Structure probing data (DMS and 2A3) for a 207-nucleotide construct. Source: RMDB library M2RFPK, as collected in RNAgym.
[RMDB]
RNA sequence: GGGAACGACUCGAGUAGAGUCGAAAACAUAGCGUUUCACAAUGUGCGCCAUUAACAUUGUUUAUGCAAGCACGUUUCGCAAUGUACGCCGCAGAAACAUUGCCAACACAAAUACGCUUCACGAUGUAAAACAUCGGUGCGUUCGCGCACCGAUGAAGUAAAGCAACUUGUUCGCAAGUUGCUUUACAAAAGAAACAACAACAACAAC
Reactivity to DMS in 0.01 (KOAc 150mM, MgCl2 10mM, bicine 150mM(pH8.5), 24C), signal-to-noise 2, nucleotides 027 to 156: c050a070u000a100g030c070g040u010u000u000c060a090c030a120a190u010g010u000g000c030g000c070c080a130u000u000a090a070c030a080u000u000g020u010u020u000a030u010g020c000a070a060g030c040a090c050g010u000u010u010c150g010c140a050a040u010g020u000a060c000g020c030c080g020c040a080g010a100a040a080c000a040u000u000g010c020c030a060a050c030a060c060a030a050a130u000a060c040g020c010u010u010c020a070c030g000a060u000g020u010a060a050a070a200c000a010u010c000g020g030u000g070c010g020u000u010c280g030c050g020c000a020c010c010g040a000u000g000a010a080
Reactivity to 2A3 in 0.01 (KOAc 150mM, MgCl2 10mM, bicine 150mM(pH8.5), 24C), signal-to-noise 8, nucleotides 027 to 156: c030a060u140a040g000c020g010u020u040u050c090a050c010a040a030u030g000u010g000c010g020c080c080a110u160u190a030a010c040a080u040u100g070u040u100u100a160u150g050c080a050a080g040c020a010c070g000u020u050u050c030g000c010a010a010u030g000u030a030c050g060c110c080g080c080a040g100a030a080a000c000a000u000u020g000c010c020a080a010c040a010c020a070a150a050u200a060c070g010c030u070u070c070a060c100g110a090u120g030u240a030a090a060a040c000a010u000c000g000g000u010g000c010g010u030u040c190g010c000g000c020a000c010c000g000a000u000g000a000a010